[RMDB]
RNA sequence: GGGAACGACUCGAGUAGAGUCGAAAAGAUAUGGACGUUGUUGAUCGACAACAGCUCGGAAACGAGACAUGUCGGACGGGCGUCCUAAGUCAAAAGAACAAGAUCACGUUCGCGUGAUCUUGUUCAAGGCACUUAUCCAGUUCGCUGGAUAAGUGCCAAAAGAAACAACAACAACAAC
Reactivity to DMS in 0.01 (KOAc 150mM, MgCl2 10mM, bicine 150mM(pH8.5), 24C), signal-to-noise 1, nucleotides 027 to 126: g020a080u000a300u000g000g000a000c040g020u000u000g020u000u040g070a090u000c030g000a040c000a030a060c130a200g010c000u000c020g050g000a100a090a200c070g000a010g000a040c080a160u000g000u000c000g000g000a050c050g020g000g000c010g000u020c000c020u020a000a110g020u010c000a050a130a080a080g000a030a020c010a000a000g000a000u000c000a000c010g010u000u060c150g020c010g030u000g000a000u000c000u000u000g000u000u000c000a080a050
Reactivity to 2A3 in 0.01 (KOAc 150mM, MgCl2 10mM, bicine 150mM(pH8.5), 24C), signal-to-noise 2, nucleotides 027 to 126: g040a010u040a030u200g010g010a020c020g000u000u000g300u300u300g120a100u090c050g020a000c000a080a040c130a040g010c000u000c000g000g010a030a080a010c020g000a010g070a060c050a090u070g040u030c010g000g020a000c010g020g030g010c010g010u000c020c000u020a140a030g070u020c000a040a000a000a200g000a010a000c000a000a000g000a000u000c000a010c020g030u110u060c280g030c020g120u010g000a010u000c010u000u010g000u010u010c000a000a000